[RMDB]
RNA sequence: GGGAACGACUCGAGUAGAGUCGAAAAUAAAAAUGACAAAUAACCCUCUGAUUCCACAAAGCAAACUUCCACAACUUGGCACCACUAUUUUCACCCAGAUGAGCGCGCUGGCGCAGCAACACCAGGCCGGAAUAAUAGAAUUCGUUCUAUUAUUCCGAAAAGAAACAACAACAACAAC
Reactivity to 2A3 in 0.01 (KOAc 150mM, MgCl2 10mM, bicine 150mM(pH8.5), 24C), signal-to-noise 2, nucleotides 027 to 126: u060a010a080a010a010a030u090g030a030c030a020a170a080u080a080a070c010c030c000u010c060u030g060a120u100u040c020c030a030c040a050a040a030g010c070a050a070a110c040u130u080c010c080a010c010a090a050c040u010u040g040g000c000a010c040c000a020c040u050a080u060u040u070u080c060a050c010c010c000a030g060a170u160g040a060g050c010g000c000g000c040u050g020g000c020g000c020a010g040c010a020a020c000a030c030c020a000g080g030c060
Reactivity to DMS in 0.01 (KOAc 150mM, MgCl2 10mM, bicine 150mM(pH8.5), 24C), signal-to-noise 3, nucleotides 027 to 126: u000a050a040a040a120a080u010g010a070c070a050a100a110u010a130a130c050c020c010u000c060u000g000a160u000u020c030c060a030c050a040a090a120g020c040a040a060a090c060u000u000c030c020a030c080a040a040c080u010u000g000g010c040a050c070c040a040c070u000a050u000u010u000u000c070a110c030c000c030a100g010a110u000g010a080g010c030g020c090g000c040u000g010g010c050g010c040a050g020c050a050a060c070a040c040c030a080g020g010c140